[RMDB]
Conditions: 150 mM KOAc, 10 mM MgCl2 and 150 mM bicine (pH 8.5), 24 C. Structure probing data (2A3 and DMS) for a 177-nucleotide construct.
RNA sequence: GGGAACGACUCGAGUAGAGUCGAAAACAACUUUUUUGGUUGUAUAGUCAAAGGUGCUUGAGUCAUUGGCAUGUAAGAUAAAUAUACCUGCAUGUUAGUCUUAGGUUCUGAUAGAAAUGACAUGCAAGUAGUUUAACAAGUUCGCUUGUUAAACUACAAAAGAAACAACAACAACAAC
Reactivity to 2A3 in 0.01 (KOAc 150mM, MgCl2 10mM, bicine 150mM(pH8.5), 24C), signal-to-noise 5, nucleotides 027 to 126: c010a010a020c020u060u100u070u030u170u300g080g000u030u030g030u030a070u080a070g030u010c040a040a040a100g070g020u020g010c020u010u030g030a010g030u040c030a080u040u100g010g000c010a000u020g040u050a080a080g010a050u090a080a270a010u190a040u070a150c010c010u020g000c000a000u010g000u020u010a020g010u000c010u030u070a040g000g030u100u000c030u040g070a110u050a130g120a030a120a060u080g010a010c010a020u030g000c000a030a080
Reactivity to DMS in 0.01 (KOAc 150mM, MgCl2 10mM, bicine 150mM(pH8.5), 24C), signal-to-noise 4, nucleotides 027 to 126: c030a040a060c030u000u010u010u010u010u000g020g000u000u000g020u000a060u000a130g010u000c030a040a100a150g010g020u000g010c020u000u000g010a070g010u000c050a060u000u000g000g010c030a030u000g010u000a030a080g000a070u010a040a110a130u000a120u010a050c040c030u010g010c010a010u000g010u010u000a040g000u000c010u000u000a080g010g010u000u000c050u000g010a120u010a080g010a060a100a130u000g000a040c020a040u000g000c080a060a080
For 2A3, 6,069 sequencing reads were counted.
It was measured as part of the RMDB library RFMREP.